[RMDB]
Structure probing data (2A3 and DMS) for a 177-nucleotide construct. The reactions ran in a buffer of 150 mM KOAc, 10 mM MgCl2 and 150 mM bicine (pH 8.5), at 24 C. Reactivities are given for positions 27 through 126. The data come from the RNA Mapping Database (RMDB), library RFMREP.

RNA sequence: GGGAACGACUCGAGUAGAGUCGAAAAAGCGGAAUCACAUCUGGUAACAGAUGCCUCUGGGGCCAAAAGCCAAGGUUUAGCAGACCCUUUAGGAUUGGUUCAAUACCUGAGUUAAUAUGGAAAGUGCCGAUUAUGUAGAGUUCGCUCUACAUAAUCGAAAAGAAACAACAACAACAAC
Reactivity to 2A3 in 0.01 (KOAc 150mM, MgCl2 10mM, bicine 150mM(pH8.5), 24C), signal-to-noise 3, nucleotides 027 to 126: a000g030c040g010g030a030a040u090c010a020c010a060u000c010u020g010g010u020a100a020c000a020g020a030u020g030c000c010u000c030u070g030g000g060g000c030c000a040a020a010a010g040c030c020a060a040g050g000u070u100u080a030g000c050a020g020a140c010c000c000u020u050u060a060g020g010a050u020u050g070g010u050u040c010a040a030u060a150c010c010u040g000a030g070u090u140a120a080u120a110u180g060g020a120a080a010g050u020g070c030
Reactivity to DMS in 0.01 (KOAc 150mM, MgCl2 10mM, bicine 150mM(pH8.5), 24C), signal-to-noise 4, nucleotides 027 to 126: a060g010c110g010g010a070a060u000c140a240c030a000u000c000u000g020g000u010a150a150c010a020g020a010u000g000c070c040u000c050u000g010g010g000g030c020c020a040a040a110a150g000c040c020a080a060g010g010u000u000u000a080g030c090a130g000a050c060c000c040u000u000u010a090g000g000a130u000u010g010g010u000u010c050a050a070u000a070c030c010u000g000a100g000u010u000a040a070u000a080u010g000g010a040a060a100g000u000g010c130